[RMDB]
RNA sequence: GGGAACGACUCGAGUAGAGUCGAAAACUCACAAUCAUGGUGGAAAGUAAAGGGCACAUCUCACAUGGCAACAGACAAGAGAAGAGAGCUUGUGCAGGGAAAUUCCCAUUAUUAAAACCAUCAGAUCUCAUGAGACUUAUUCACUGUCAUGAGAACAGCACUACCGGAUAUUCGUAUCCGGUAGUGCAAAAGAAACAACAACAACAAC
Reactivity to 2A3 in 0.01 (KOAc 150mM, MgCl2 10mM, bicine 150mM(pH8.5), 24C), signal-to-noise 1, nucleotides 027 to 156: c010u030c030a010c050a000a190u170c030a090u050g010g000u030g000g010a150a000a070g010u090a000a000a090g020g010g000c090a040c010a110u050c080u000c000a010c010a090u070g000g100c070a130a000c030a040g180a050c060a070a020g100a000g040a300a030g100a030g010a010g000c000u040u000g000u000g100c040a010g000g060g000a000a120a050u140u040c000c000c000a010u020u080a000u040u020a080a130a010a040c010c010a020u080c000a000g150a170u000c030u010c020a010u000g010a030g030a050c030u090u170a110u200u110c080a020c110u070g110u150c000a000u000g000a000g020a030a030c030a000

The data come from the RNA Mapping Database (RMDB), library OK3TST. The record gives the reactivity of an RNA of 207 nucleotides to 2A3. The RNA was probed in 150 mM KOAc, 10 mM MgCl2 and 150 mM bicine (pH 8.5) at 24 C. For 2A3 the reverse transcriptase was SuperScript II with manganese.